[RMDB]
This 177-nucleotide RNA was probed chemically with DMS. The RNA was probed in 150 mM KOAc, 10 mM MgCl2 and 150 mM bicine (pH 8.5) at 24 C. For DMS, 4,437 sequencing reads were counted.
RNA sequence: GGGAACGACUCGAGUAGAGUCGAAAAAGCAAAGGUGAUCAUGCAAUGACCAAGGCCUUCACCUUUCAUGCAUCCAGGACCCAAACCUUGGUUACUUCUGGCACAGCAUAGGGGUAGAUCUUGAUUGUCGUACACGAGAAUUCGUUCUCGUGUACGAAAAAGAAACAACAACAACAAC
Reactivity to DMS in 0.01 (KOAc 150mM, MgCl2 10mM, bicine 150mM(pH8.5), 24C), signal-to-noise 4, nucleotides 027 to 126: a060g010c070a030a050a010g010g020u010g000a020u010c130a090u000g010c080a090a060u000g010a050c050c020a020a010g000g000c070c100u000u000c040a030c010c010u020u000u000c110a180u010g020c040a080u000c020c030a090g000g000a130c030c020c020a050a090a110c090c050u000u010g000g010u000u000a070c170u010u000c060u000g000g000c120a060c100a120g020c060a030u000a050g010g000g010g010u000a090g000a040u000c030u000u000g000a130u000u020g020